[RMDB]
RNA sequence: GGGAACGACUCGAGUAGAGUCGAAAAGUAUACUUGACAAUCUAUGGGGACGGAAUAAGGACCAACCCUACAACAGGACAUUUGAUACAGAAUGAUGUGGCAUGGUUCUGGAAUCCUGUCACAAACGCUGUCAUAUUAGUUUCGACUAAUAUGACAGAAAAGAAACAACAACAACAAC
Reactivity to 2A3 in 0.01 (KOAc 150mM, MgCl2 10mM, bicine 150mM(pH8.5), 24C), signal-to-noise 9, nucleotides 027 to 126: g030u030a040u040a230c040u060u090g060a030c060a080a100u030c040u120a120u120g030g000g010g020a010c030g010g070a110a090u200a180a090g100g020a020c010c000a010a060c010c010c010u030a040c040a100a020c020a030g050g060a010c010a050u050u090u160g120a100u120a090c040a050g110a130a100u120g090a060u080g030u010g020g000c030a030u120g010g030u070u100c050u060g020g050a020a020u040c000c010u020g010u020c000a000c020a020a050a000c100g010
Reactivity to DMS in 0.01 (KOAc 150mM, MgCl2 10mM, bicine 150mM(pH8.5), 24C), signal-to-noise 9, nucleotides 027 to 126: g010u000a040u000a060c070u010u000g010a090c090a180a110u010c070u010a150u010g000g000g010g020a080c280g010g010a080a060u020a150a100g010g010a100c020c030a060a300c040c030c010u000a040c090a060a070c090a030g010g000a140c110a050u000u000u000g010a100u000a060c100a070g000a100a090u000g010a120u000g010u010g000g000c040a040u010g020g000u010u000c060u010g010g010a090a060u010c010c030u010g020u000c030a030c050a040a060a090c250g000